Chemical mapping of a 177-nucleotide RNA with DMS and 2A3. The RNA was probed in 150 mM KOAc, 10 mM MgCl2 and 150 mM bicine (pH 8.5) at 24 C. 2A3 adducts were read by reverse transcription with SuperScript II with manganese. For 2A3, 2,620 sequencing reads were counted.
RNA sequence: GGGAACGACUCGAGUAGAGUCGAAAAGAUAUGGAAAGAUUGAAAGACAGCAACAGCGUAUACGGGAACAUGUUCGGAAACGAACAUGGGAACGUAUACGACAUGCUGGGGAGAUCUUUCCUAAGUCGGAUCUACGUUAGUUCGCUAACGUAGAUCCAAAAGAAACAACAACAACAAC
Reactivity to DMS in 0.01 (KOAc 150mM, MgCl2 10mM, bicine 150mM(pH8.5), 24C), signal-to-noise 1, nucleotides 027 to 126: g010a120u000a300u000g000g000a020a000a020g020a000u000u000g000a300a110a180g000a160c090a020g000c040a050a190c270a220g000c000g000u000a080u000a000c000g000g010g010a300a210c010a000u000g000u010u010c000g000g010a100a150a100c000g040a000a000c000a000u000g000g060g000a220a180c000g020u000a000u000a000c000g010a080c120a070u000g020c000u000g000g000g000g000a290g000a000u000c000u000u000u000c000c000u000a020a100g000u020c070
Reactivity to 2A3 in 0.01 (KOAc 150mM, MgCl2 10mM, bicine 150mM(pH8.5), 24C), signal-to-noise 1, nucleotides 027 to 126: g020a040u110a010u180g000g000a010a020a000g010a030u040u140g120a240a210a150g290a140c020a030g040c000a020a180c070a300g100c000g000u010a010u000a010c000g050g000g000a030a000c000a000u020g000u030u000c000g040g030a040a090a120c020g000a000a000c000a000u010g000g010g000a010a000c000g000u000a000u000a000c030g000a040c000a030u090g060c010u010g030g000g000g000a150g010a000u000c000u030u000u000c000c040u010a130a020g120u040c070

It was measured as part of the RMDB library TTRINS.